[RMDB]
RNA sequence: GGGAACGACUCGAGUAGAGUCGAAAAGAUAUGGAUACUGGAGGAGCGCAGAGGCGAUGAAAGCGUCCUUAAUCGGAAACGAUUAAGGACGCUGGAGCCUCUGACCCGCUUGAAGGUAUCCUAAGUCGAGAUUUAUGUAGUUCGCUACAUAAAUCUCAAAAGAAACAACAACAACAAC
Reactivity to DMS in 0.01 (KOAc 150mM, MgCl2 10mM, bicine 150mM(pH8.5), 24C), signal-to-noise 2, nucleotides 027 to 126: g020a130u000a300u020g000g020a010u000a000c000u010g000g020a300g000g010a000g030c030g020c010a000g000a050g010g040c000g000a060u010g010a090a160a050g000c010g010u000c000c000u000u000a000a000u010c010g010g030a090a050a300c010g010a020u010u010a000a010g010g010a010c000g020c000u000g000g000a070g000c000c000u010c020u010g000a060c240c200c060g020c000u000u000g010a300a250g000g000u000a010u000c000c010u010a040a080g010u000c120
Conditions: 150 mM KOAc, 10 mM MgCl2 and 150 mM bicine (pH 8.5), 24 C.
Structure probing data (DMS) for a 177-nucleotide construct.
Reactivities are given for positions 27 through 126.